RNA sequence: GGGAACGACUCGAGUAGAGUCGAAAACGCCAAACACCAACAUUGCUGGAUAAAACGCCAUCCCGAACGUCCCAAGCCGAAGCAGCUAACAUUAUGCACGGUGUUUCUGAUUUUAUAACCAAAAGAGCCACACGUAAGCUUCUACGUGCAUAUUGUACCCUAUCCAUCUAUUCGUAGAUGGAUAGGGAAAAGAAACAACAACAACAAC
Reactivity to 2A3 in 0.01 (KOAc 150mM, MgCl2 10mM, bicine 150mM(pH8.5), 24C), signal-to-noise 5, nucleotides 027 to 156: c070g030c010c010a030a070a030c050a020c030c030a060a050c020a130u080u230g010c060u050g030g030a090u100a110a130a020a010c050g020c030c000a050u060c020c000c000g040a060a010c030g040u030c020c020c020a050a010g020c030c030g050a060a010g040c030a010g020c020u060a060a020c010a040u070u080a020u050g000c010a000c030g000g000u010g030u030u040u000c010u000g030a020u010u080u050u180a190u090a110a050c060c040a070a060a040a020g050a030g040c050c030a070c010a020c150g090u080a060a050g010c010u080u020c030u080a020c000g000u000g000c010a010u020a030u050u050g050u060a080
Reactivity to DMS in 0.01 (KOAc 150mM, MgCl2 10mM, bicine 150mM(pH8.5), 24C), signal-to-noise 2, nucleotides 027 to 156: c050g000c040c050a130a120a160c070a050c040c000a050a090c060a150u000u000g010c050u000g010g030a160u000a050a050a090a110c070g000c030c000a070u000c000c010c020g010a090a070c070g020u000c020c010c030a040a120g000c030c040g000a110a140g020c030a060g020c030u010a080a060c020a050u000u000a010u000g010c050a070c000g000g020u000g010u000u000u010c020u010g010a110u030u010u000u000a110u000a060a090c020c010a020a030a110a100g000a060g000c010c020a080c100a100c210g000u000a070a130g030c050u000u000c010u000a070c010g010u010g000c000a030u000a050u000u010g000u000a200